[RMDB]
RNA sequence: GGGAACGACUCGAGUAGAGUCGAAAAGGAAUAUUCAUCGUAUUGGCGGUCGUCACGAACAUGACGUUCGAUAGAUCAUACUCAACUUCAAGGUAGUGAUCCAUGAAGGUCGCGUUCUGUUCCGGGACAGUCAUCGCUACUUCGGUAGCGAUGACUGAAAAGAAACAACAACAACAAC
Reactivity to DMS in 0.01 (KOAc 150mM, MgCl2 10mM, bicine 150mM(pH8.5), 24C), signal-to-noise 1, nucleotides 027 to 126: g000g020a100a060u010a020u010u010c080a110u000c170g000u020a050u030u010g020g000c050g010g020u010c080g000u020c090a140c110g000a000a020c070a070u010g000a040c080g000u000u000c000g020a030u000a120g010a040u000c080a030u000a030c000u000c090a050a150c220u000u010c160a050a090g000g000u000a110g050u000g020a010u000c000c070a070u010g020a020a010g000g040u000c010g030c100g050u000u020c040u000g010u000u000c030c030g020g020g000a180
Reactivity to 2A3 in 0.01 (KOAc 150mM, MgCl2 10mM, bicine 150mM(pH8.5), 24C), signal-to-noise 2, nucleotides 027 to 126: g070g040a080a120u120a120u130u150c070a100u100c160g070u110a050u040u260g120g010c000g000g040u080c020g020u030c040a040c080g080a000a020c020a030u100g040a000c080g200u000u000c030g050a000u100a050g040a010u040c020a000u020a070c100u210c200a120a200c070u140u160c070a090a080g100g000u090a130g080u040g020a000u000c040c080a070u210g020a060a020g110g010u050c050g020c010g000u030u000c000u000g020u040u000c020c000g000g080g030a000